[RMDB]
RNA sequence: GGGAACGACUCGAGUAGAGUCGAAAAGAUAUGGAGCUUCUGGCAACUAUGAAGUGUGAGGCUUGCAAUCAUGGUCGGAAACGACCAUGAUUGUCGUCUCACAUGGAGUUGAGGAAGCUCCUAAGUCCAUAUACGUCUACUUCGGUAGACGUAUAUGAAAAGAAACAACAACAACAAC
Reactivity to DMS in 0.01 (KOAc 150mM, MgCl2 10mM, bicine 150mM(pH8.5), 24C), signal-to-noise 9, nucleotides 027 to 126: g000a060u010a170u010g000g000a030g010c000u000u000c000u000g030g030c040a010a010c000u000a260u020g000a150a270g010u000g010u000g000a010g010g000c010u010u010g020c000a010a010u000c000a000u000g010g000u010c000g000g010a050a060a130c010g020a010c000c000a000u000g000a000u000u000g010u010c300g010u000c000u000c000a000c000a000u000g000g000a010g010u000u000g000a300g000g000a010a000g010c000u000c000c000u000a000a070g000u000c020
Reactivity to 2A3 in 0.01 (KOAc 150mM, MgCl2 10mM, bicine 150mM(pH8.5), 24C), signal-to-noise 2, nucleotides 027 to 126: g020a000u060a040u100g000g000a000g000c010u010u030c040u180g300g300c060a010a010c020u250a280u300g010a030a020g020u010g000u000g000a010g030g030c300u300u300g020c110a010a000u010c000a000u010g000g000u000c020g020g000a040a040a050c000g000a020c010c000a000u000g000a000u000u000g000u060c000g000u010c000u000c000a000c000a000u000g000g000a010g000u010u010g000a020g010g020a010a000g000c000u000c000c000u000a000a000g000u000c000